[RMDB]
RNA sequence: GGGAACGACUCGAGUAGAGUCGAAAAAAACUGAUAGGUAUGCACGGACAAUGGAAGAAUUCAAUACUGAAGAUCGACCGGUGACUCCACCUAUGGAAUUUUCAUGGGAAUUCGAGGAGAAAUUCGAUGAGUUACGCUAGUUCGCUAGCGUAACUCAAAAAGAAACAACAACAACAAC
Reactivity to DMS in 0.01 (KOAc 150mM, MgCl2 10mM, bicine 150mM(pH8.5), 24C), signal-to-noise 1, nucleotides 027 to 126: a050a040a080c040u050g000a000u000a080g000g020u080a000u020g040c150a000c010g000g000a070c090a020a100u000g000g030a160a130g080a170a110u000u000c050a010a200u040a120c080u020g000a050a000g000a040u000c070g030a140c010c050g000g000u000g020a160c050u000c120c080a110c050c010u000a030u000g000g000a000a080u050u020u000u000c000a040u000g010g000g000a080a090u000u000c080g000a100g020g000a140g000a220a010a150u050u000c000g000a190
The record gives the reactivity of an RNA of 177 nucleotides to DMS.
It was measured as part of the RMDB library OK1LIB.
Values cover nucleotides 27 to 126.
The RNA was probed in 150 mM KOAc, 10 mM MgCl2 and 150 mM bicine (pH 8.5) at 24 C.